[RMDB]
This 177-nucleotide RNA was probed chemically with 2A3 and DMS. The reactions ran in a buffer of 150 mM KOAc, 10 mM MgCl2 and 150 mM bicine (pH 8.5), at 24 C.
RNA sequence: GGGAACGACUCGAGUAGAGUCGAAAACGACAGAACUUCGGUUCUGUCGAAAUAUAAUCAGCGGUUAAAAAGCUGGCGUUAUAACCGCUGAACGCCAGCUUAAAAGAUUCGUGUUCGCACGAAUCAAGGUUAUAAAUUCCUUCGGGAAUUUAUAACCAAAAGAAACAACAACAACAAC
Reactivity to 2A3 in 0.01 (KOAc 150mM, MgCl2 10mM, bicine 150mM(pH8.5), 24C), signal-to-noise 2, nucleotides 027 to 126: c010g010a000c000a000g000a000a000c000u050u110c200g100g000u020u000c000u010g000u000c000g000a000a010a000u090a010u030a030a130u110c020a010g030c040g040g120u130u190a100a170a060a060a020g000c000u000g010g000c010g010u040u080a120u060a190a040c000c010g000c060u040g020a000a000c000g010c020c000a010g000c000u020u040a040a120a000a040g020a000u010u000c000g010u010g050u020u070c180g010c050a000c000g000a000a000u000c010a000a030
Reactivity to DMS in 0.01 (KOAc 150mM, MgCl2 10mM, bicine 150mM(pH8.5), 24C), signal-to-noise 2, nucleotides 027 to 126: c010g000a010c010a010g000a000a010c000u000u030c240g040g010u000u000c010u000g000u000c000g000a000a050a120u020a110u010a080a060u010c050a060g020c060g000g010u000u000a070a100a130a070a030g010c010u000g000g060c010g040u000u000a070u010a070a080c030c080g010c040u010g010a070a010c010g010c000c010a000g010c000u000u000a040a090a110a100g000a000u000u000c000g020u000g020u010u000c240g030c000a000c000g000a000a010u010c000a080a060